Notes: Chemical mapping of a 177-nucleotide RNA with 2A3 and DMS. The reactions ran in a buffer of 150 mM KOAc, 10 mM MgCl2 and 150 mM bicine (pH 8.5), at 24 C. The data come from the RNA Mapping Database (RMDB), library TTRINS. For 2A3 the reverse transcriptase was SuperScript II with manganese.

[RMDB]
RNA sequence: GGGAACGACUCGAGUAGAGUCGAAAAGAUAUGGAUUUCCAUAGGAAGAAGCCCAUUGUCAGGAAAGCCUUCGGAAACGAAGGACUUUCCUUGGAUUUAUGGGUGUAAACUAUGGAAAUCCUAAGUCCAGUGAAACUAAGUUCGCUUAGUUUCACUGAAAAGAAACAACAACAACAAC
Reactivity to 2A3 in 0.01 (KOAc 150mM, MgCl2 10mM, bicine 150mM(pH8.5), 24C), signal-to-noise 1, nucleotides 027 to 126: g050a030u120a050u280g010g010a000u000u000u010c000c000a000u030a000g050g010a130a300g000a020a000g020c000c000c000a020u010u030g020u040c010a030g010g020a030a040a000g000c000c000u040u010c010g010g090a140a150a110c020g000a030a000g000g030a130c000u020u000u030c010c030u010u100g000g020a000u000u300u300a040u000g010g000g000u040g010u000a010a000a000c000u000a000u000g030g000a000a000a000u000c000c000u010a000a000g000u000c020
Reactivity to DMS in 0.01 (KOAc 150mM, MgCl2 10mM, bicine 150mM(pH8.5), 24C), signal-to-noise 5, nucleotides 027 to 126: g000a100u000a300u000g010g020a020u000u000u000c000c000a010u000a000g010g000a040a140g020a270a300g000c020c010c000a010u010u010g020u010c020a040g000g010a010a000a010g010c000c000u000u000c000g010g000a090a060a180c000g010a010a010g000g000a050c000u000u000u000c000c000u010u000g020g010a010u000u020u000a010u000g000g000g010u010g040u000a020a150a300c000u000a000u000g010g000a010a010a010u000c000c010u010a010a120g000u000c020